[RMDB]
RNA sequence: GGGAACGACUCGAGUAGAGUCGAAAACGCGAUGGAUACGUCCAUCGCGAAUCCGUCCAAGCCGCGGUCGUUAAACUGUGGCACGGUUGUGCCUAGGUGCAACCCUGCUACUAAUGGCGGUACCCCUGCCCAAGCUACCGUCUACGGACGGUAGCAACACUCAUAUCCUAUUCGUAGGAUAUGAGUGAAAAGAAACAACAACAACAAC
Reactivity to DMS in 0.01 (KOAc 150mM, MgCl2 10mM, bicine 150mM(pH8.5), 24C), signal-to-noise 3, nucleotides 027 to 156: c020g020c020g030a010u000g030g000a060u000a070c300g030u000c010c030a010u000c010g000c000g030a000a040u000c020c020g020u000c010c020a160a250g030c040c030g010c090g030g010u020c000g000u000u010a080a080a100c100u000g030u000g010g020c000a020c090g010g010u000u000g020u000g000c010c020u000a160g070g050u000g000c050a010a020c010c000c030u010g010c000u000a070c020u000a120a110u000g010g010c030g030g010u000a070c020c020c030c030u000g010c040c030c040a090a140g020c020u010a000c010c000g010u000c000u000a150c300g000g000a020c000g010g000u010a010g020c000a030a100
Reactivity to 2A3 in 0.01 (KOAc 150mM, MgCl2 10mM, bicine 150mM(pH8.5), 24C), signal-to-noise 7, nucleotides 027 to 156: c010g010c000g000a010u000g010g010a010u030a060c240g110u030c000c000a000u000c000g000c000g000a000a000u020c000c010g030u020c030c020a090a070g020c020c010g040c060g020g020u050c030g030u050u110a130a200a070c100u080g000u010g010g010c000a000c010g010g000u010u020g010u010g000c010c030u110a190g130g000u010g000c000a000a000c000c000c010u010g030c010u010a010c010u040a100a140u160g040g000c010g010g010u080a080c000c000c000c020u050g020c020c030c010a070a020g000c000u000a000c000c000g000u000c010u010a050c230g090g000a000c000g000g000u000a000g000c000a000a000